[RMDB]
RNA sequence: GGGAACGACUCGAGUAGAGUCGAAAAGAGUGUAGAAGAUUCUAAAAAUUGGGGUAGAUACAGUUUUCUUGGAUUCAAUCCUAUCCUUGAGUUGACUUGUCAGGAUGGAGAACUGGUCAUUAAAGGAACCUACGCAUGCGUUCGCGCAUGCGUAGGUAAAAGAAACAACAACAACAAC
Reactivity to DMS in 0.01 (KOAc 150mM, MgCl2 10mM, bicine 150mM(pH8.5), 24C), signal-to-noise 1, nucleotides 027 to 126: g000a010g000u000g010u000a000g020a120a060g000a070u010u000c040u080a000a070a050a160a080u020u020g000g000g000g080u010a010g000a100u010a060c060a000g000u050u000u010u000c080u020u000g000g030a130u010u090c100a120a050u010c000c000u050a050u000c020c010u000u000g000a110g010u040u000g010a090c010u010u000g000u050c130a070g000g020a140u000g050g000a060g000a060a050c010u010g000g000u000c000a060u000u000a100a000a060g000g000a030
Reactivity to 2A3 in 0.01 (KOAc 150mM, MgCl2 10mM, bicine 150mM(pH8.5), 24C), signal-to-noise 2, nucleotides 027 to 126: g040a040g010u160g000u090a020g080a130a000g010a130u080u000c040u180a110a070a100a040a030u180u190g010g000g010g050u110a080g030a060u080a080c040a030g030u020u000u010u070c080u030u000g010g030a030u100u110c060a170a160u030c000c060u080a030u060c000c000u080u090g000a020g010u040u080g070a040c010u080u180g020u060c000a000g050g150a300u200g140g050a050g000a040a030c040u040g000g040u030c030a010u040u070a050a000a030g060g030a060
Chemical mapping of a 177-nucleotide RNA with DMS and 2A3. It was measured as part of the RMDB library OK1LIB. Conditions: 150 mM KOAc, 10 mM MgCl2 and 150 mM bicine (pH 8.5), 24 C. For 2A3, 647 sequencing reads were counted. For DMS, 1,470 sequencing reads were counted.